[RMDB]
RNA sequence: GGGAACGACUCGAGUAGAGUCGAAAAGAUAUGGACGCUAGAGGAGCUAUGAAGUACUCUUCGGAAACGAAGAGGUAUGGAGCUCCGAUUGGCGUCCUAAGUCAAAAUCACACGUUCGCGUGUGAAAGUAGUAUUAAGCGUUCGCGCUUAAUACUACAAAAGAAACAACAACAACAAC
Reactivity to 2A3 in 0.01 (KOAc 150mM, MgCl2 10mM, bicine 150mM(pH8.5), 24C), signal-to-noise 4, nucleotides 027 to 126: g030a000u060a060u160g000g000a010c010g000c050u080a030g020a100g110g000a000g000c010u070a270u300g060a030a010g010u010a000c010u010c000u020u010c010g000g020a070a050a020c020g010a000a000g010a020g050g120u060a020u040g030g010a000g000c000u020c000c000g000a000u000u040g000g000c000g000u000c000c010u000a010a000g000u000c010a000a020a000a240u080c000a000c000a000c000g040u120u120c300g000c010g130u000g000u000g010a030a020a020
Reactivity to DMS in 0.01 (KOAc 150mM, MgCl2 10mM, bicine 150mM(pH8.5), 24C), signal-to-noise 5, nucleotides 027 to 126: g010a060u010a300u010g000g010a010c010g020c010u000a060g000a300g010g000a020g030c000u010a210u020g010a150a210g000u000a030c010u000c000u000u000c010g020g000a080a080a220c010g030a010a000g010a040g010g000u000a000u000g000g010a010g010c000u000c010c000g000a160u010u000g010g000c000g000u000c000c010u000a000a060g010u000c040a060a130a100a190u000c000a000c000a000c000g010u010u020c300g010c020g020u000g010u000g010a030a050a110
This 177-nucleotide RNA was probed chemically with 2A3 and DMS. For 2A3, 10,882 sequencing reads were counted. 2A3 adducts were read by reverse transcription with SuperScript II with manganese. The reactions ran in a buffer of 150 mM KOAc, 10 mM MgCl2 and 150 mM bicine (pH 8.5), at 24 C.